[RMDB]
RNA sequence: GGGAACGACUCGAGUAGAGUCGAAAAUUAAACCUUCGAUCCAUCCAAUAAGACUGACUCAGUCAAUAAGGAUGGAUGGAGGAUCCCAAUAAGACUGAGUCAGUCAGAAAAGCGGAAACGCAAAAAAUCCUAGUACAUAGUUCGCUAUGUACUAGGAAAAAGAAACAACAACAACAAC
Reactivity to DMS in 0.01 (KOAc 150mM, MgCl2 10mM, bicine 150mM(pH8.5), 24C), signal-to-noise 3, nucleotides 027 to 126: u010u010a080a080a300c040c000u010u000c000g010a010u000c010c000a010u010c010c020a240a110u000a130a100g000a030c000u000g010a010c010u000c010a010g000u030c000a070a100u010a070a080g000g020a020u000g000g010a000u000g000g000a000g010g010a140u010c000c000c020a110a120u010a080a110g000a020c010u000g020a010g020u010c000a010g010u000c020a110g000a110a040a120a130g010c000g000g000a100a060a100c000g020c020a000a050a050a070a090a120